[RMDB]
RNA sequence: GGGAACGACUCGAGUAGAGUCGAAAAUUAGGUAUUUAUGCAACACCUUCUACAGAUACAGCUAUUUCGAAUGCACCGUUAGAUAAAGUUGGCGUUGCUUCAGGUAUUUAUAAAAUGGCUUCAUCACCGCUCGAACCAUAUUCGUAUGGUUCGAGCGAAAAGAAACAACAACAACAAC
Reactivity to 2A3 in 0.01 (KOAc 150mM, MgCl2 10mM, bicine 150mM(pH8.5), 24C), signal-to-noise 2, nucleotides 027 to 126: u090u020a050g000g000u060a130u060u120u080a210u260g010c040a000a180c020a020c090c000u070u040c000u020a050c060a170g000a080u060a050c120a040g030c000u000a040u030u100u290c140g050a100a000u250g000c000a000c000c000g040u100u190a090g000a220u020a080a140a020g220u010u090g000g000c000g000u000u000g000c000u000u000c000a050g010g000u110a070u120u090u060a300u300a000a010a000a020u090g000g000c000u120u050c010a060u000c030a000c060